[RMDB]
RNA sequence: GGGAACGACUCGAGUAGAGUCGAAAAGAAAAGCACGGCAAGCACAUGAAGCACAUGAAGCAGUACAAGCAGUACUAGCACAUGAAGCACUACAAGCAGUAGAAGCAGCCGAAGCACAUGAAAAAAAGAGUUUAUUAACGUUCGCGUUAAUAAACUCAAAAGAAACAACAACAACAAC
Reactivity to 2A3 in 0.01 (KOAc 150mM, MgCl2 10mM, bicine 150mM(pH8.5), 24C), signal-to-noise 2, nucleotides 027 to 126: g070a000a070a010a010g060c030a000c040g020g000c070a110a120g030c010a050c000a120u070g070a110a010g040c030a010c000a050u020g050a110a030g000c010a000g000u040a020c040a060a180g160c070a050g090u010a010c020u020a080g020c010a020c000a040u030g020a080a000g010c000a010c030u060a030c000a170a070g210c030a020g020u030a010g020a090a010g010c020a010g000c000c000g010a030a000g010c000a030c010a140u170g090a000a060a000a040a070a060a000
Reactivity to DMS in 0.01 (KOAc 150mM, MgCl2 10mM, bicine 150mM(pH8.5), 24C), signal-to-noise 2, nucleotides 027 to 126: g000a100a070a060a030g000c030a160c130g020g040c040a010a140g050c080a110c080a110u000g010a100a170g020c060a170c050a010u000g000a050a070g020c030a100g020u000a030c020a080a100g020c150a080g000u020a000c020u000a040g090c000a110c010a020u020g000a120a100g000c050a170c050u000a040c040a070a100g000c050a050g020u000a030g030a050a160g000c000a090g000c030c040g000a110a080g030c080a000c300a070u010g020a000a000a050a090a000a120a110